An RNA of 177 nucleotides, treated with DMS and 2A3 and read out base by base. It was measured as part of the RMDB libraries RFM100 and RFMREP. 2A3 adducts were read by reverse transcription with SuperScript II with manganese.
RNA sequence: GGGAACGACUCGAGUAGAGUCGAAAACAGUGGUAUAAGUAAGCUGUGCAUUCGCUAUGUUUAGGUUUAGAAUGUAGUUUAGUGCUAGCUGAUUAGAGUGUGUUAAAGACUUGUAGAGCGCCUUAGGUACUUGGAUUAGUUUCGACUAAUCCAAGUAAAAAGAAACAACAACAACAAC
Reactivity to DMS in 0.01 (KOAc 150mM, MgCl2 10mM, bicine 150mM(pH8.5), 24C), signal-to-noise 9, nucleotides 027 to 126: c040a070g010u020g010g010u010a100u010a040a060g010u020a220a060g000c010u000g010u010g010c010a020u000u010c300g000c010u000a000u000g010u000u000u000a090g030g010u020u020u020a120g010a010a010u000g020u000a010g000u000u010u010a030g020u000g010c010u000a020g000c000u000g000a150u000u000a040g000a120g020u020g010u000g010u000u000a050a080a230g000a060c040u000u000g010u010a100g000a060g010c030g010c020c020u000u010a070g010g010
Reactivity to 2A3 in 0.01 (KOAc 150mM, MgCl2 10mM, bicine 150mM(pH8.5), 24C), signal-to-noise 8, nucleotides 027 to 126: c020a030g080u090g130g050u140a060u040a140a040g090u020a020a010g000c000u010g050u060g100c000a000u030u030c030g000c020u010a010u030g040u000u030u060a150g130g090u060u120u060a070g030a050a000u020g010u020a010g010u060u060u150a030g000u010g010c000u010a000g000c010u010g010a040u010u030a020g040a040g080u110g010u010g010u050u050a140a250a000g020a030c020u030u050g080u180a030g010a000g050c000g020c000c000u020u040a100g070g040
The reactions ran in a buffer of 150 mM KOAc, 10 mM MgCl2 and 150 mM bicine (pH 8.5), at 24 C.